[RMDB]
RNA sequence: GGGAACGACUCGAGUAGAGUCGAAAAACAAAGGUCAGUGUUCCGCAUGCAGGACAUAUUGGAGAUUUGCUGGAGAUUAAAAUGAAUCAUAUGGCCAUGCAGUUCCUUUGUCUCGAUGCACUCCGCAUGUCCCGUCAUGGUUCGCCAUGACGGGACAAAAAGAAACAACAACAACAAC
Reactivity to 2A3 in 0.01 (KOAc 150mM, MgCl2 10mM, bicine 150mM(pH8.5), 24C), signal-to-noise 1, nucleotides 027 to 126: a000c010a000a150a000g130g070u070c000a000g000u030g080u180u090c050c050g120c000a000u080g000c000a100g090g130a000c000a040u250a220u300u230g050g010a000g000a140u060u060u060g050c100u020g000g010a010g040a080u080u240a300a000a000a000u220g220a010a010u080c070a070u200a300u300g070g000c020c000a000u030g000c000a000g020u000u180c000c000u000u000u000g000u010c000u000c000g050a030u100g000c040a000c040u050c000c000g000c000a000